Chemical mapping of a 177-nucleotide RNA with DMS and 2A3.
Source: RMDB library OK2TST, as collected in RNAgym.
The DMS profile rests on 3,023 reads.
Values cover nucleotides 27 to 126.

[RMDB]
RNA sequence: GGGAACGACUCGAGUAGAGUCGAAAAGUCUUUGUCCUUUGAGGACGAGAAACGAGCCUCUGAGUUCUCUUUUCUCGGGAUCUUUUCCCGAAAUAGAGAGGAGUGGAUGAUUGCUGCACUGGCAGGGACUCGAAUAGAACUUCGGUUCUAUUCGAGUAAAAGAAACAACAACAACAAC
Reactivity to DMS in 0.01 (KOAc 150mM, MgCl2 10mM, bicine 150mM(pH8.5), 24C), signal-to-noise 2, nucleotides 027 to 126: g010u010c010u000u000u030g020u000c010c010u020u000u000g000a100g010g000a020c000g000a030g010a040a080a130c080g020a150g000c050c010u000c040u000g010a220g000u000u000c000u000c000u000u000u000u000c150u000c010g020g000g000a040u000c250u010u000u000u000c000c000c000g010a010a020a030u000a020g010a010g000a030g030g000a080g010u000g000g010a070u010g010a120u010u010g010c050u000g000c040a090c100u000g010g010c040a050g010g000g000
Reactivity to 2A3 in 0.01 (KOAc 150mM, MgCl2 10mM, bicine 150mM(pH8.5), 24C), signal-to-noise 2, nucleotides 027 to 126: g030u000c000u010u180u240g030u010c030c000u050u120u250g170a110g020g000a020c030g000a030g030a050a110a020c070g020a050g060c020c000u040c060u060g130a130g160u120u000c000u050c000u000u010u000u020c160u010c000g000g010g010a050u060c200u100u260u170u020c020c000c000g000a000a010a020u060a030g000a000g000a010g000g020a020g000u070g040g050a100u130g030a050u120u240g020c060u060g040c030a060c170u050g060g000c000a000g010g030g020